Source information
The data come from the RNA Mapping Database (RMDB), library TTRDES. This 177-nucleotide RNA was probed chemically with 2A3 and DMS. Conditions: 150 mM KOAc, 10 mM MgCl2 and 150 mM bicine (pH 8.5), 24 C.
RNA sequence: GGGAACGACUCGAGUAGAGUCGAAAAGAUAUGGAACUACAAAGAGCGAUAAGCUCUGUGUCGGAAACGACACUGAGCUUUUGACGCUCAAAAAGGUUCCUAAGUCAAACACCGCUUCGGCGGUGAACGUUUUUAAUUCGUUCGCGAAUUAAAAACGAAAAGAAACAACAACAACAAC
Reactivity to 2A3 in 0.01 (KOAc 150mM, MgCl2 10mM, bicine 150mM(pH8.5), 24C), signal-to-noise 1, nucleotides 027 to 126: g000a000u060a010u180g030g000a030a000c020u150a020c200a140a240a030g010a010g000c010g070a130u050a300a000g000c020u030c000u000g030u000g000u010c000g040g030a090a070a020c000g020a010c020a020c000u000g010a000g020c050u090u020u060u110g170a040c000g000c000u000c000a020a000a030a000a030g030g000u000u000c020c000u000a120a020g020u000c040a040a120a090c010a000c020c000g030c030u100u080c300g180g000c020g030g010u010g010a020a000
Reactivity to DMS in 0.01 (KOAc 150mM, MgCl2 10mM, bicine 150mM(pH8.5), 24C), signal-to-noise 2, nucleotides 027 to 126: g000a070u000a240u020g020g000a010a000c000u000a120c250a120a200a190g020a010g010c000g050a190u000a020a050g010c000u000c000u000g030u000g000u000c000g010g000a030a070a090c020g010a040c000a000c030u000g000a020g000c000u000u000u010u000g010a300c140g010c000u000c000a020a020a070a070a130g000g000u000u000c000c000u000a030a130g010u010c020a170a130a250c000a020c000c000g000c010u000u010c170g020g050c010g000g030u000g000a050a050